[RMDB]
RNA sequence: GGGAACGACUCGAGUAGAGUCGAAAAAAAAAAAGAUAUGGAUUAGCGGGAGAGCAUGGGAGAGCCUGAUAGUCGGAAACGACUAUCGGCUUCAUGCUCAUCGAUCGCUAAUCCUAAGUCAAAAAAACAUAUUACCACCGUUCGCGGUGGUAAUAUGAAAAGAAACAACAACAACAAC
Reactivity to DMS in 0.01 (KOAc 150mM, MgCl2 10mM, bicine 150mM(pH8.5), 24C), signal-to-noise 1, nucleotides 027 to 126: a000a000a040a040a020a120a090g020a020u000a300u010g010g010a010u000u000a020g020c010g000g000g000a000g000a010g020c010a000u000g020g000g010a280g000a000g010c000c000u020g020a000u000a010g000u000c000g000g000a150a030a130c000g010a040c000u000a000u010c000g000g000c010u030u000c000a010u010g000c000u010c010a160u000c150g000a060u020c010g020c000u000a000a010u000c010c000u000a000a070g010u030c010a000a000a080a130a030a080a090

The record gives the reactivity of an RNA of 177 nucleotides to DMS. The DMS profile rests on 1,408 reads.